[RMDB]
About this RNA: Structure probing data (DMS and 2A3) for a 177-nucleotide construct. DMS adducts were read by reverse transcription with MarathonRT. The RNA was probed in 150 mM KOAc, 10 mM MgCl2 and 150 mM bicine (pH 8.5) at 24 C. For DMS, 9,374 sequencing reads were counted. The 2A3 profile rests on 19,300 reads.
RNA sequence: GGGAACGACUCGAGUAGAGUCGAAAACAUGGAGUCUUCGGACUCCAUGCACUUCCGAAAUAAUGCCUCGGUAUAAAAGGCAAACCCUUGGAAACAAGGGAACGAUGUCACGAUUCGUCGUGACAAAGAUUUAAGAGUACUUCGGUACUCUUAAAUCAAAAGAAACAACAACAACAAC
Reactivity to DMS in 0.01 (KOAc 150mM, MgCl2 10mM, bicine 150mM(pH8.5), 24C), signal-to-noise 7, nucleotides 027 to 126: c000a010u000g000g010a030g020u000c000u000u020c210g030g010a020c010u000c000c000a010u000g000c050a110c190u000u000c000c000g010a100a130a100u010a120a120u000g000c000c000u010c070g000g020u010a100u010a070a080a070a010g000g010c010a060a100a140c010c000c000u000u000g000g000a170a120a190c000a010a000g000g000g010a050a040c170g010a150u000g010u010c010a010c000g010a030u000u010c210g010u000c000g010u000g010a000c000a020a040a070
Reactivity to 2A3 in 0.01 (KOAc 150mM, MgCl2 10mM, bicine 150mM(pH8.5), 24C), signal-to-noise 8, nucleotides 027 to 126: c000a000u000g000g010a000g010u000c020u050u070c270g090g000a000c000u000c000c000a000u010g000c010a020c040u060u030c010c000g050a070a070a100u260a080a070u120g000c010c000u030c030g030g030u240a140u080a230a120a020a010g000g000c000a020a040a150c000c000c000u000u000g000g020a030a040a030c000a000a010g000g010g020a010a000c050g080a060u090g000u010c000a000c010g010a010u040u060c170g050u010c000g000u100g010a000c000a000a010a000